The data come from the RNA Mapping Database (RMDB), libraries RFM100 and RFMREP. Structure probing data (DMS and 2A3) for a 177-nucleotide construct. The reactions ran in a buffer of 150 mM KOAc, 10 mM MgCl2 and 150 mM bicine (pH 8.5), at 24 C. For DMS the reverse transcriptase was MarathonRT.

RNA sequence: GGGAACGACUCGAGUAGAGUCGAAAAGUGAGGAGUGAUCCAGCUUGGGCUGACGAGAGGCUCCGGAGCCUUCACGUUCAGUGCUUUUUACCUGCCAAUCAAACUGCUACAAGACAACACCCUGAUCGAACACUGGGUAAUUCGUUACCCAGUGUUCAAAAGAAACAACAACAACAAC
Reactivity to DMS in 0.01 (KOAc 150mM, MgCl2 10mM, bicine 150mM(pH8.5), 24C), signal-to-noise 4, nucleotides 027 to 126: g020u020g000a100g020g020a040g000u000g000a130u000c030c050a300g000c020u000u010g020g000g010c050u010g040a060c060g000a290g000a080g000g000c020u000c060c170g000g010a080g010c030c010u030u020c090a120c070g010u010u010c020a010g030u000g010c020u000u010u030u030u000a120c030c010u000g000c010c030a020a060u060c080a060a060a060c090u000g000c000u000a050c100a090a130g010a080c090a050a080c090a100c030c000c010u040g000a040u010c110
Reactivity to 2A3 in 0.01 (KOAc 150mM, MgCl2 10mM, bicine 150mM(pH8.5), 24C), signal-to-noise 9, nucleotides 027 to 126: g100u080g040a080g020g020a050g010u070g010a040u020c020c020a010g020c040u070u070g040g040g000c010u030g020a040c030g020a020g010a030g110g000c010u040c070c100g040g020a010g010c000c000u040u070c090a070c090g030u080u050c030a020g020u050g140c030u060u050u010u050u130a050c000c020u010g030c010c010a030a040u040c030a050a040a090c030u050g030c010u030a050c020a120a040g050a050c030a080a000c010a100c010c000c010u050g030a110u120c050